RNA sequence: GGGAACGACUCGAGUAGAGUCGAAAAGAUCGCCGAACAGAUUACGCUCGACGCGCAGGCACUCUCCAAUGUCGGGGGCCUGAUAGCCCACACCGGGACGACAGAUUUUAAUCUGAAUCUGCCGGGACGUACGUAUGCUAUUCGUAGCAUACGUACGAAAAGAAACAACAACAACAAC
Reactivity to 2A3 in 0.01 (KOAc 150mM, MgCl2 10mM, bicine 150mM(pH8.5), 24C), signal-to-noise 5, nucleotides 027 to 126: g040a080u110c020g010c060c010g010a020a020c030a040g130a140u130u170a060c100g010c050u040c040g060a030c020g000c010g000c020a010g010g000c020a130c060u080c010u030c040c050a190a270u230g080u220c100g000g010g000g010g000c010c000u030g020a040u120a040g030c010c000c000a040c000a020c020c000g030g000g040a040c060g020a000c020a010g020a010u060u080u050u180a110a120u050c030u030g030a030a060u010c010u040g020c000c000g000g010g000a010
Reactivity to DMS in 0.01 (KOAc 150mM, MgCl2 10mM, bicine 150mM(pH8.5), 24C), signal-to-noise 5, nucleotides 027 to 126: g000a140u010c040g030c020c010g010a040a080c050a120g030a120u000u000a080c180g020c040u000c030g010a050c090g010c100g020c030a030g010g000c030a110c050u000c020u000c070c110a130a130u000g010u020c130g000g000g000g000g010c000c010u010g010a090u010a120g010c000c010c010a120c170a100c050c000g000g010g020a070c070g010a120c010a000g000a030u010u000u010u010a080a090u000c110u000g000a050a050u000c020u000g010c000c000g000g000g000a180
Description
Structure probing data (2A3 and DMS) for a 177-nucleotide construct. The RNA was probed in 150 mM KOAc, 10 mM MgCl2 and 150 mM bicine (pH 8.5) at 24 C. Values are in units of 0.01, from 0 to 300, in steps of 10. DMS adducts were read by reverse transcription with MarathonRT. Source: RMDB library OK2TST, as collected in RNAgym.